[RMDB]
RNA sequence: GGGAACGACUCGAGUAGAGUCGAAAAGGCGUCGUCCGGCUCUCCUCGGAGCCUCGCUGCUCUGGGCGGAAGAGUCUUCUGACUUUUCUAGCCUAUUCAGCAUUGCGCUCUUGAGGCCCGGCGAAACGCGGUUCGUCUGCUGAGGAUGCCUCCGCUAGUGUAGAGGAUAGUUCGCUAUCCUCUACACAAAAGAAACAACAACAACAAC
Reactivity to DMS in 0.01 (KOAc 150mM, MgCl2 10mM, bicine 150mM(pH8.5), 24C), signal-to-noise 1, nucleotides 027 to 156: g000g020c000g050u000c020g000u030c020c030g060g000c060u000c050u010c010c000u000c000g020g030a080g000c020c010u000c140g010c010u010g000c000u000c040u000g000g020g020c000g000g000a030a030g010a020g020u000c020u000u000c280u000g100a030c000u000u000u010u000c000u000a140g050c000c010u010a020u000u000c020a070g030c000a210u000u010g040c110g000c040u000c030u000u000g030a050g060g030c170c000c010g030g020c050g020a030a040a070c020g020c010g040g000u010u010c000g010u000c070u000g020c010u020g000a190g000g000a210u000g000c040c030u000c000c040g030c140u000a150
Reactivity to 2A3 in 0.01 (KOAc 150mM, MgCl2 10mM, bicine 150mM(pH8.5), 24C), signal-to-noise 4, nucleotides 027 to 156: g040g020c010g020u010c010g070u140c020c010g020g000c050u070c030u030c100c000u000c010g020g020a000g010c000c020u040c100g000c010u010g000c000u000c010u000g000g000g000c000g000g010a010a000g000a000g010u000c000u210u160c230u300g000a000c010u020u000u010u000c010u050a190g000c000c000u020a030u110u160c000a000g000c000a010u020u280g020c160g010c000u010c000u080u300g000a000g000g000c010c000c000g000g000c000g000a030a020a010c020g000c020g010g010u020u030c020g020u010c040u020g040c010u020g010a020g020g050a210u140g080c010c010u040c030c040g040c080u050a040